[RMDB]
RNA sequence: GGGAACGACUCGAGUAGAGUCGAAAAUGUGGUACGGUAUGGCAAGGCUUGCCUCGGAGCCAAGCGGGAGGGCUCCCAGGGCGUCGCACGGGCGCAGUGCUGCGCGAGACUCUAGGCCCGUGACAUGUCACGGACAAAUUUCGUGACCGUGUUAGGCGUGGACUAAAUCGUUCGCGAUUUAGUCCACAAAAGAAACAACAACAACAAC
Reactivity to 2A3 in 0.01 (KOAc 150mM, MgCl2 10mM, bicine 150mM(pH8.5), 24C), signal-to-noise 1, nucleotides 027 to 156: u210g010u010g000g020u000a000c040g020g030u080a080u060g070g010c030a020a050g060g050c020u110u130g030c030c010u010c000g000g000a000g000c000c010a040a020g040c000g000g040g000a050g000g050g010c010u010c010c000c000a010g030g040g030c000g010u010c030g000c030a050c060g030g050g000c060g040c060a020g010u010g010c050u000g000c040g010c030g030a030g000a020c050u020c060u080a030g070g000c040c000c010g040u020g000a000c030a020u130g010u000c000a000c000g040g000a010c140a030a220a100u030u040u020c020g000u000g000a040c030c000g010u040g020u030u040a090g080g000c060
The record gives the reactivity of an RNA of 207 nucleotides to 2A3. The RNA was probed in 150 mM KOAc, 10 mM MgCl2 and 150 mM bicine (pH 8.5) at 24 C. Reactivities are given for positions 27 through 156.